[RMDB]
Description: Chemical mapping of a 207-nucleotide RNA with 2A3 and DMS.
RNA sequence: GGGAACGACUCGAGUAGAGUCGAAAAAAAAUGUAACUGCGAACAACAUCGUUCCUUUCGCUCGCAAAGCUGCUGCUGUAGCUUAAUAAGAACACCUUAACUUAGGUUCGAGCAUUCAUAAUUCGACUCCGUUAAGGAUUAUGACUAAACCCCCAACGAUAUCGCAUAAGUUCGCUUAUGCGAUAUCAAAAGAAACAACAACAACAAC
Reactivity to 2A3 in 0.01 (KOAc 150mM, MgCl2 10mM, bicine 150mM(pH8.5), 24C), signal-to-noise 1, nucleotides 027 to 156: a000a000a000a000u130g010u050a170a040c120u140g050c080g070a090a020c040a060a020c030a140u030c020g020u020u010c000c000u050u120u060c060g000c020u030c030g020c010a010a010a000g020c010u070g000c030u060g050c060u030g050u020a010g000c010u020u110a060a010u100a000a090g040a040a020c010a020c060c000u050u020a060a080c030u010u100a030g000g010u090u070c000g000a000g010c020a020u090u160c020a010u100a090a040u040u010c010g000a020c040u030c060c010g060u080u040a050a000g000g030a020u040u060a040u020g030a000c040u080a050a090a120c000c000c000c000c000a000a000c030
Reactivity to DMS in 0.01 (KOAc 150mM, MgCl2 10mM, bicine 150mM(pH8.5), 24C), signal-to-noise 2, nucleotides 027 to 156: a050a030a020a070u000g000u000a050a040c040u000g030c000g020a030a030c070a220a110c030a060u000c060g040u000u010c000c010u000u000u000c050g030c000u000c020g040c070a060a070a200g010c010u000g000c000u000g010c070u000g020u000a100g000c060u000u000a040a070u000a080a140g010a030a090c110a100c070c010u000u000a060a050c040u000u000a020g020g000u000u000c030g020a070g000c080a210u020u010c090a050u010a050a060u000u000c000g000a140c010u010c050c140g030u000u000a050a190g000g010a050u000u000a030u000g020a080c190u010a040a090a200c010c000c000c000c010a010a170c150
DMS (dimethyl sulfate) methylates the pairing face of unpaired adenines and cytosines. The 2A3 profile rests on 1,122 reads. For DMS, 2,491 sequencing reads were counted.